[RMDB]
Annotation:
Chemical mapping of a 207-nucleotide RNA with 2A3. Values are in units of 0.01, from 0 to 300, in steps of 10. 2A3 is a SHAPE reagent: it acylates the 2'-hydroxyl of flexible nucleotides of all four kinds. For 2A3, 952 sequencing reads were counted.
RNA sequence: GGGAACGACUCGAGUAGAGUCGAAAAUCAAGUUUCUUGAUUUUCUUCUUAACCUUCCGGAGGUCCCUCUCGAGUUCCUCUAACUUCUUUCUUCCACUCACCCACUGCUCGAGAACCUCUUCCCUGCCCCCGCGACUCUUCUUCGACUCGGACCGGCCGUGAUAGUAUGGUUCGCCAUACUAUCACGAAAAGAAACAACAACAACAAC
Reactivity to 2A3 in 0.01 (KOAc 150mM, MgCl2 10mM, bicine 150mM(pH8.5), 24C), signal-to-noise 2, nucleotides 027 to 156: u020c000a020a020g100u160u260u120c050u030u030g010a020u050u050u000u050c020u070u000c010u120u160a130a140c020c030u110u100c090c030g020g070a010g040g050u080c060c030c000u030c010u010c010g020a050g040u020u040c050c030u070c130u150a180a170c030u130u120c010u140u230u020c030u120u050c050c050a040c040u020c050a070c020c040c010a050c060u050g000c000u010c000g010a020g010a070a060c000c030u010c000u060u060c020c010c020u030g030c030c020c000c010c000g040c000g020a000c000u000c010u060u020c000u050u060c040g000a010c030u000c010g010g010a020c000c000g040g030c030